An RNA of 177 nucleotides, treated with DMS and 2A3 and read out base by base. For DMS the reverse transcriptase was MarathonRT. The 2A3 profile rests on 971 reads. The RNA was probed in 150 mM KOAc, 10 mM MgCl2 and 150 mM bicine (pH 8.5) at 24 C. It was measured as part of the RMDB library OK1LIB.

[RMDB]
RNA sequence: GGGAACGACUCGAGUAGAGUCGAAAAUACUCAUGGGAAGUCGGCACGACUCCCGACUAACGUGGAUGUCCGCCGUCUAGCUCAUUGGUCGGAGCUGUCGUGCGGACGUUGAGUAACAGCUAGCCAACAUAGUCGGCUUUUUCGAAAGCCGACUAUGAAAAGAAACAACAACAACAAC
Reactivity to DMS in 0.01 (KOAc 150mM, MgCl2 10mM, bicine 150mM(pH8.5), 24C), signal-to-noise 2, nucleotides 027 to 126: u030a070c000u000c000a070u030g000g000g000a090a040g020u000c010g010g020c230a100c100g000a040c110u010c000c010c000g000a050c030u000a120a130c090g000u000g000g020a090u010g000u000c000c000g000c020c010g000u000c010u040a010g000c000u000c000a070u000u020g000g030u000c110g000g010a000g000c010u010g000u000c000g000u050g030c000g000g030a000c000g010u020u000g010a070g010u000a040a080c120a110g000c060u040a100g000c060c050a130a230
Reactivity to 2A3 in 0.01 (KOAc 150mM, MgCl2 10mM, bicine 150mM(pH8.5), 24C), signal-to-noise 1, nucleotides 027 to 126: u070a000c000u000c030a040u040g000g050g180a040a080g010u020c010g020g060c050a010c240g080a040c010u000c000c000c000g000a020c030u130a250a020c020g040u040g080g040a010u030g030u010c000c060g020c000c010g020u000c010u010a000g000c010u010c010a070u070u000g090g010u100c070g050g000a020g030c020u000g000u010c020g000u160g030c000g010g010a000c000g000u000u020g020a000g010u020a030a030c010a000g080c050u040a030g030c000c000a000a020